This 207-nucleotide RNA was probed chemically with DMS and 2A3. It was measured as part of the RMDB library OK3TST. The DMS profile rests on 1,938 reads. For 2A3, 1,409 sequencing reads were counted.
[RMDB]
RNA sequence: GGGAACGACUCGAGUAGAGUCGAAAAAACACACCAAAAAAGAGAAAGGUUAUUUUACAGUCAAAUCAUAGCAUUUAUAAAAUCAUUUAAAUAUGCCCUCGUUUAGUUAGUAAUACUCACUAUAUAAAGUGGAUAUGAACACCACAUAAUUGAGGUACUGACUAUUAGAAUUCGUUCUAAUAGUCAGAAAAGAAACAACAACAACAAC
Reactivity to DMS in 0.01 (KOAc 150mM, MgCl2 10mM, bicine 150mM(pH8.5), 24C), signal-to-noise 1, nucleotides 027 to 156: a020a060c020a070c160a180c070c050a020a050a080a080a110a120g010a140g000a050a070a060g020g000u000u000a040u000u010u000u000a140c040a080g000u000c050a040a080a080u000c090a080u000a060g030c000a050u000u000u000a110u000a130a020a040a040u000c020a020u000u000u000a070a070a080u010a090u000g040c090c000c000u000c030g030u000u000u010a040g020u000u000a120g010u000a030a000u010a030c020u000c000a020c000u010a140u010a200u000a070a030a090g030u010g030g000a040u010a040u000g000a110a160c220a060c000c000a090c140a080u000a030a040u010u000g010a000g000g010u030a180
Reactivity to 2A3 in 0.01 (KOAc 150mM, MgCl2 10mM, bicine 150mM(pH8.5), 24C), signal-to-noise 2, nucleotides 027 to 156: a000a000c110a030c020a010c000c050a090a060a000a000a000a000g060a010g040a060a000a000g020g020u070u060a060u000u110u040u070a100c050a060g030u070c020a000a090a060u070c030a040u120a070g000c000a000u090u080u090a120u300a080a100a020a030u100c000a060u040u110u120a030a180a020u190a070u130g010c000c000c010u000c010g000u010u010u030a020g020u000u000a010g000u000a000a010u030a060c010u010c010a000c010u040a010u090a110u070a300a110a000g000u000g020g010a010u020a030u140g040a010a030c020a010c040c000a010c000a100u150a070a050u090u140g010a000g010g010u060a040
About this RNA:
The reactions ran in a buffer of 150 mM KOAc, 10 mM MgCl2 and 150 mM bicine (pH 8.5), at 24 C.